[RMDB]
RNA sequence: GGGAACGACUCGAGUAGAGUCGAAAAAUAAAAUUGCUGAGUCGGAUUAGAAGUUGUUGAGACAUUUUCAGUAUAACCCACUACUUCGCCUAUAAUACAUAUACCUGGUUUCGCCUCAAUUGCGUAAGCAUCAUUCACAAUUCGUUGUGAAUGAUGCAAAAGAAACAACAACAACAAC
Reactivity to DMS in 0.01 (KOAc 150mM, MgCl2 10mM, bicine 150mM(pH8.5), 24C), signal-to-noise 3, nucleotides 027 to 126: a070u020a070a040a100a100u010u000g010c030u010g000a040g010u000c050g020g010a100u010u020a100g010a070a100g010u000u000g010u000u010g000a140g010a090c110a070u010u000u000u000c070a090g010u000a070u000a060a120c040c010c000a110c090u000a060c060u010u000c030g020c040c030u000a050u010a050a070u000a050c140a030u000a070u010a090c050c030u010g010g010u000u000u000c040g010c050c060u000c070a040a050u010u010g010c070g010u010a070a140
Reactivity to 2A3 in 0.01 (KOAc 150mM, MgCl2 10mM, bicine 150mM(pH8.5), 24C), signal-to-noise 2, nucleotides 027 to 126: a000u120a020a070a010a020u150u090g040c010u040g000a010g020u020c020g050g010a070u130u120a070g030a140a020g000u040u040g030u070u030g120a080g000a090c050a100u130u050u030u060c010a060g040u080a020u030a130a040c000c000c000a010c010u030a030c000u010u000c010g030c020c000u110a110u040a230a090u110a020c050a040u100a010u020a130c040c060u020g040g100u030u060u060c010g000c000c010u000c060a030a180u090u060g010c050g060u050a060a020